Structure probing data (2A3 and DMS) for a 177-nucleotide construct. For 2A3, 3,276 sequencing reads were counted. 2A3 adducts were read by reverse transcription with SuperScript II with manganese. DMS adducts were read by reverse transcription with MarathonRT. High DMS reactivity at an A or C suggests that its Watson-Crick edge is free. Values are in units of 0.01, from 0 to 300, in steps of 10. Source: RMDB library OK2TRN, as collected in RNAgym.

RNA sequence: GGGAACGACUCGAGUAGAGUCGAAAAGAACCGCUGCCUUUCAGGAAAGGUGCUGACGUGGGCCACUGCCGCUUCGCUGGGAAGCAAUGGGCCCAGCUAGGCCCGGGGCGCGGCCACACCCCUGUGGCCUUACACGCCCUUUCGAGGGCGUGUAAGGAAAAGAAACAACAACAACAAC
Reactivity to 2A3 in 0.01 (KOAc 150mM, MgCl2 10mM, bicine 150mM(pH8.5), 24C), signal-to-noise 4, nucleotides 027 to 126: g050a040a020c000c020g010c120u200g000c000c010u100u160u170c130a120g050g300a200a080a050g090g010u220g080c010u010g000a040c070g080u050g010g000g010c020c020a300c170u050g020c050c160g000c030u000u010c030g130c270u280g160g300g020a000a010g000c010a000a040u030g000g010g000c000c020c000a000g030c020u000a000g010g000c020c010c060g000g000g000g000c000g000c010g000g000c000c000a030c000a000c000c010c000c000u030g080u110g130g040
Reactivity to DMS in 0.01 (KOAc 150mM, MgCl2 10mM, bicine 150mM(pH8.5), 24C), signal-to-noise 6, nucleotides 027 to 126: g010a170a130c010c020g020c040u010g040c020c010u000u000u000c210a140g020g010a080a060a110g010g000u010g020c030u000g010a100c240g010u000g000g010g020c010c010a090c070u010g010c200c160g010c040u000u000c040g030c250u010g000g010g020a050a020g010c040a050a110u000g000g000g000c000c000c010a020g000c050u000a170g000g010c010c020c010g000g010g000g010c030g010c030g010g010c030c030a070c080a100c050c010c000c090u000g010u000g010g000